Chemical mapping of a 177-nucleotide RNA with 2A3 and DMS. The RNA was probed in 150 mM KOAc, 10 mM MgCl2 and 150 mM bicine (pH 8.5) at 24 C. It was measured as part of the RMDB library RFM100. For DMS the reverse transcriptase was MarathonRT.
RNA sequence: GGGAACGACUCGAGUAGAGUCGAAAAAAUCAAAGAUCCGCUUAGACGAGCCUAUAUGGAAGAGCUAGAACAUAUGUGCUACAUGCUAUAGUUAGUAGUUGUAGAUGGGUGUGGUUUUGAUAGGGAUCCCACCGAUAAUGUUCGCAUUAUCGGUGGGAAAAGAAACAACAACAACAAC
Reactivity to 2A3 in 0.01 (KOAc 150mM, MgCl2 10mM, bicine 150mM(pH8.5), 24C), signal-to-noise 2, nucleotides 027 to 126: a000a000u220c070a040a040a000g000a070u010c050c000g000c000u060u070a040g050a160c080g000a000g000c000c040u100a020u000a000u090g050g000a070a060g020a010g100c030u140a000g080a050a000c000a100u000a080u210g030u040g050c000u000a030c030a090u050g010c000u060a060u050a080g030u110u040a000g000u010a060g050u020u100g050u090a000g020a160u040g050g020g000u140g030u090g000g010u000u000u000u010g110a130u050a010g000g000g000a000u000
Reactivity to DMS in 0.01 (KOAc 150mM, MgCl2 10mM, bicine 150mM(pH8.5), 24C), signal-to-noise 1, nucleotides 027 to 126: a080a070u010c140a000a100a010g000a110u000c050c010g010c070u030u040a000g040a070c050g000a060g000c000c030u000a030u000a040u030g030g010a090a050g040a030g000c150u070a010g050a050a100c040a110u000a020u010g010u010g000c010u000a010c060a080u100g010c010u000a030u000a170g000u040u010a050g010u000a020g040u000u000g010u000a010g040a100u010g030g000g020u000g000u020g020g000u000u000u000u000g000a020u020a100g000g020g000a120u030